An RNA of 207 nucleotides, treated with 2A3 and read out base by base.
RNA sequence: GGGAACGACUCGAGUAGAGUCGAAAAGGUGGACAACAACACCACGGCGCUGGAACUGCCCCGCUGGCACGCGGUGGUCAACCACGAGUCCGGUGUCAAGCACGGCAACGAGGUGGUCCGCGUACCGGACGCCACCGCCUCGGAGACGUUCGACUCGGCUACGUCUUCUGUUCGCAGAAGACGUAGCAAAAGAAACAACAACAACAAC
Reactivity to 2A3 in 0.01 (KOAc 150mM, MgCl2 10mM, bicine 150mM(pH8.5), 24C), signal-to-noise 1, nucleotides 027 to 156: g020g000u050g040g010a040c010a050a000c000a040a020c000a130c010c010a010c040g020g000c050g000c110u170g010g010a090a040c080u010g000c000c000c030c020g000c000u090g150g020c090a010c060g010c000g010g000u200g010g010u140c070a130a210c050c060a050c060g000a010g040u050c020c000g010g000u020g020u100c090a040a000g050c070a020c050g020g010c060a030a000c000g000a010g020g010u000g020g000u070c060c050g000c000g000u050a170c000c080g170g100a000c000g030c000c010a010c000c050g010c000c000u020c000g010g000a030g000a000c030g080u030u060c030g000a010c010u030c050g000
The RNA was probed in 150 mM KOAc, 10 mM MgCl2 and 150 mM bicine (pH 8.5) at 24 C. It was measured as part of the RMDB library OK3TST.